[RMDB]
RNA sequence: GGGAACGACUCGAGUAGAGUCGAAAAGAAGACGUGACGAAAAGUCACGAAAAGGUGCAAUGUUCUUUAAGCACCAAACACGGAAAAACCGUGAAAGAACAAACGAGUGGGAGACCACUCGAAAAGAGUAGCGUAAAAUCUUCGGAUUUUACGCUACAAAAGAAACAACAACAACAAC
Reactivity to DMS in 0.01 (KOAc 150mM, MgCl2 10mM, bicine 150mM(pH8.5), 24C), signal-to-noise 2, nucleotides 027 to 126: g030a180a130g000a190c000g000u010g000a000c020g000a180a060a280a100g000u000c010a000c060g000a040a010a160a030g000g010u080g000c000a080a110u060g050u000u000c050u050u000u020a030a140g000c000a000c000c000a060a090a130c000a000c020g000g000a140a100a030a100a140c000c000g000u000g000a040a090a060g000a000a090c000a090a130a170c000g010a000g000u000g000g000g000a200g010a120c010c000a040c000u000c030g000a040a010a080a080g000a080
Reactivity to 2A3 in 0.01 (KOAc 150mM, MgCl2 10mM, bicine 150mM(pH8.5), 24C), signal-to-noise 4, nucleotides 027 to 126: g130a040a020g090a050c020g000u000g000a000c010g060a080a140a000a210g010u010c000a000c010g010a000a020a010a040g000g000u010g000c040a050a220u110g020u010u010c020u010u090u100a060a000g010c000a000c010c000a000a000a000c010a000c000g000g040a180a030a010a020a040c010c000g000u000g010a060a050a000g020a010a010c040a110a040a020c040g000a000g000u000g000g010g000a060g030a090c000c010a000c000u000c000g010a020a010a000a000g120a020